The record gives the reactivity of an RNA of 177 nucleotides to 2A3. The data come from the RNA Mapping Database (RMDB), library RFM100. For 2A3, 492 sequencing reads were counted. Values cover nucleotides 27 to 126. Conditions: 150 mM KOAc, 10 mM MgCl2 and 150 mM bicine (pH 8.5), 24 C.
RNA sequence: GGGAACGACUCGAGUAGAGUCGAAAAUCAGUAACCAAGCGACUGCUAAACUAGCUUGGCGACUACGCUUGGGUGCUAAAAUUAAAUACGCUAUGAUGCCGCAUUUAUUAAAAGAGCAUACUAACCCGAGUGAAACCGGUUUCGACCGGUUUCACUCAAAAGAAACAACAACAACAAC
Reactivity to 2A3 in 0.01 (KOAc 150mM, MgCl2 10mM, bicine 150mM(pH8.5), 24C), signal-to-noise 1, nucleotides 027 to 126: u100c000a010g030u020a020a070c000c000a000a000g010c000g090a070c160u110g010c000u110a070a000a050c110u160a220g080c000u020u020g090g000c010g030a030c040u210a100c090g000c000u000u000g030g000g000u010g000c000u190a120a000a000a000u130u080a000a010a060u080a000c080g010c040u080a110u300g100a090u060g120c040c040g000c000a000u000u110u040a040u040u190a040a090a030a030g020a000g040c000a010u090a020c000u020a010a030c000c000c000